[RMDB]
RNA sequence: GGGAACGACUCGAGUAGAGUCGAAAACAUUGUUCUGAUCAUCUGAAGAUCAGCUAUUAGAAGAGAAAGAUCAGUAAAGUCCUUUGGACCUGAUCAGCUUGAUACAAGAACUACUGAUUUCAACUUCAAAACGGGUGCUACUUCGGUAGCACCCGAAGCUUAGAUGCAAGUUCGCUUGCAUCUAAGCAAAAGAAACAACAACAACAAC
Reactivity to 2A3 in 0.01 (KOAc 150mM, MgCl2 10mM, bicine 150mM(pH8.5), 24C), signal-to-noise 2, nucleotides 027 to 156: c040a010u080u160g040u160u140c000u000g010a010u000c020a030u020c030u220g110a130a020g000a030u010c000a000g010c000u070a130u280u150a080g030a060a020g020a000g040a020a060a030g030a010u000c000a000g010u020a060a090a020g020u030c020c020u100u130u300g000g010a050c010c020u080g040a120u070c020a020g140c010u040u050g030a050u100a110c090a050a030g020a040a010c010u040a000c000u020g010a010u050u020u040c050a050a040c010u030u020c000a020a020a130a010c000g000g010g010u000g000c010u000a000c000u010u040c150g090g000u000a000g010c010a000c000c000c030g000a010a000
Structure probing data (2A3) for a 207-nucleotide construct.
Reactivities are given for positions 27 through 156.
The data come from the RNA Mapping Database (RMDB), library M2RFPK.